[RMDB]
RNA sequence: GGGAACGACUCGAGUAGAGUCGAAAAGGUGUCUUGACAUGAAAGAAGAGAUUAAGAGACUCGCCAGCUGACUUUGUUCGAGGAUUGUCUUGUCAGUUGGGUAAAUUUAGACAGUCCCUAUGAUUGUAGACGCUGAUAUAGCAAGGCAUUUGGACAGCUGCUUCGCUAAGUUCGCUUAGCGAAGCAGAAAAGAAACAACAACAACAAC
Reactivity to 2A3 in 0.01 (KOAc 150mM, MgCl2 10mM, bicine 150mM(pH8.5), 24C), signal-to-noise 2, nucleotides 027 to 156: g060g000u010g020u000c010u020u090g060a100c050a080u100g040a100a050a020g060a060a000g000a030g060a020u040u160a080a020g020a010g020a040c020u020c020g070c010c000a010g010c020u010g010a010c040u060u040u150g070u280u200c070g070a040g000g000a020u000u030g000u000c010u030u040g000u020c000a000g000u000u000g000g000g000u110a130a120a000u140u110u070a020g000a010c000a000g050u020c080c000c010u050a090u100g070a070u020u160g030u150a010g010a130c040g000c070u020g010a100u160a070u040a210g000c010a020a000g040g000c020a020u000u050u200g010g020a040c010a010g000

This 207-nucleotide RNA was probed chemically with 2A3. It was measured as part of the RMDB library RSTRND. The 2A3 profile rests on 720 reads. Values cover nucleotides 27 to 156.